[RMDB]
RNA sequence: GGGAACGACUCGAGUAGAGUCGAAAAGUACAGUGUAACAGUUAGAUGUGAUGAUCUUGAAAACAAAGACAGUUACACGUACGUUGAAGUUAAAAAUCUAGAACCUGAGUAUUAUUUCCACUACACAACAAACCAUCAUCCAUAUCUGGUGGAACUCGCUUAUUAUCUUAUUCGUAAGAUAAUAAGCAAAAGAAACAACAACAACAAC
Reactivity to 2A3 in 0.01 (KOAc 150mM, MgCl2 10mM, bicine 150mM(pH8.5), 24C), signal-to-noise 8, nucleotides 027 to 156: g010u000a000c120a070g000u010g010u010a030a020c040a040g030u050u090a060g050a150u120g060u070g070a100u050g020a040u030c030u050u100g060a100a070a040a030c080a040a110a010g040a010c020a010g000u000u000a000c000a000c000g000u000a000c000g000u020u070g050a040a000g010u050u110a050a070a030a080a150u060c060u050a060g060a150a100c040c050u050g020a020g050u060a080u230u020a060u030u130u010c020c010a010c030u100a040c080a020c030a150a090c040a070a110a050c030c020a030u080c000a010u030c080c030a050u070a060u190c070u060g010g000u010g000g020a020a040c030u010c090
Reactivity to DMS in 0.01 (KOAc 150mM, MgCl2 10mM, bicine 150mM(pH8.5), 24C), signal-to-noise 4, nucleotides 027 to 156: g020u000a020c010a160g060u010g020u020a010a010c020a150g040u010u000a060g000a300u000g030u000g010a080u000g000a090u000c130u020u010g020a130a150a150a200c120a070a280a210g010a040c010a130g030u010u010a000c020a000c000g020u000a010c020g000u000u020g000a060a190g010u010u010a010a080a060a150a100u000c030u000a100g000a080a140c030c030u010g010a070g020u000a060u000u000a090u000u000u010c020c040a050c050u000a100c060a110c060a020a090c070a060a120a120c040c000a030u000c030a070u000c050c060a080u000a100u010c080u000g040g030u000g000g010a050a070c100u000c050